[RMDB]
RNA sequence: GGGAACGACUCGAGUAGAGUCGAAAACUGACAAGCUCAAGGGCUAUGUGCUCGACCUUCGUCUCAAUCCGGGCGGCCUUCUGGAUCAGGCGGUUGCCGUUUCCGAUGCCUUCCUCGACAAGGGCGAGGACUAGCAGUACUUCGGUACUGCUAGUCCAAAAGAAACAACAACAACAAC
Reactivity to 2A3 in 0.01 (KOAc 150mM, MgCl2 10mM, bicine 150mM(pH8.5), 24C), signal-to-noise 3, nucleotides 027 to 126: c020u040g030a020c030a000a040g000c010u000c090a100a130g100g000g000c030u080a140u290g100u060g030c030u030c030g050a100c000c000u020u090c050g040u020c040u010c090a080a110u050c030c040g020g000g000c000g020g030c000c030u100u000c070u080g080g040a100u070c050a080g070g000c040g110g150u140u240g010c000c000g000u000u080u010c020c000g020a030u080g010c020c000u020u090c010c030u040c030g050a060c030a070a020g010g030g000c010g030a070
Reactivity to DMS in 0.01 (KOAc 150mM, MgCl2 10mM, bicine 150mM(pH8.5), 24C), signal-to-noise 4, nucleotides 027 to 126: c040u010g010a040c110a070a100g010c040u000c030a100a150g010g000g000c020u000a090u010g020u010g010c040u010c020g010a120c090c020u000u020c130g020u000c010u000c110a100a170u010c080c050g000g010g010c300g000g020c010c050u000u000c030u010g040g000a060u010c090a080g030g000c040g020g010u010u000g010c010c020g030u000u010u010c010c010g000a100u000g020c010c030u000u000c010c000u010c250g020a060c110a070a080g000g000g000c030g000a100

Description
The record gives the reactivity of an RNA of 177 nucleotides to 2A3 and DMS. For 2A3, 2,812 sequencing reads were counted. Conditions: 150 mM KOAc, 10 mM MgCl2 and 150 mM bicine (pH 8.5), 24 C. The data come from the RNA Mapping Database (RMDB), library OK2TST.